[RMDB]
Background:
This 177-nucleotide RNA was probed chemically with DMS and 2A3. DMS adducts were read by reverse transcription with MarathonRT. 2A3 adducts were read by reverse transcription with SuperScript II with manganese.
RNA sequence: GGGAACGACUCGAGUAGAGUCGAAAACGGCGAGUGGACGCGACAGCGGGACGGCAGCCGGCGAGGGGAGGCGGCGCGGCAGCAGCGACAGGCGUCGAGUGGAGGAGGCGGCGGCAGCAGCGGCCCGUAACAUGCCUAAAUUCGUUUAGGCAUGUUAAAAAGAAACAACAACAACAAC
Reactivity to DMS in 0.01 (KOAc 150mM, MgCl2 10mM, bicine 150mM(pH8.5), 24C), signal-to-noise 8, nucleotides 027 to 126: c070g010g020c040g000a120g010u020g010g010a090c060g000c030g000a100c160a100g020c030g000g010g000a070c060g000g010c050a080g010c030c040g000g000c070g000a100g000g000g000g000a100g010g010c040g000g010c030g010c050g000g000c050a080g000c090a090g010c050g010a070c080a100g010g000c060g020u010c030g010a110g020u010g000g010a110g010g000a090g000g000c050g000g020c040g000g010c040a070g000c060a060g000c040g010g010c000c000c010g010
Reactivity to 2A3 in 0.01 (KOAc 150mM, MgCl2 10mM, bicine 150mM(pH8.5), 24C), signal-to-noise 9, nucleotides 027 to 126: c020g040g010c030g010a050g050u120g040g060a030c030g020c030g070a050c050a050g010c020g000g010g020a020c020g030g020c000a020g000c000c000g030g020c040g030a080g000g030g000g000a030g030g020c030g010g000c010g000c020g060g000c020a080g010c020a010g020c030g070a050c040a050g080g040c010g020u040c010g020a040g030u110g010g060a090g020g020a030g010g020c010g020g010c000g010g010c010a040g000c010a010g030c030g020g020c000c000c010g000
Description
Conditions: 150 mM KOAc, 10 mM MgCl2 and 150 mM bicine (pH 8.5), 24 C. For DMS, 36,075 sequencing reads were counted. The data come from the RNA Mapping Database (RMDB), library OK1LIB.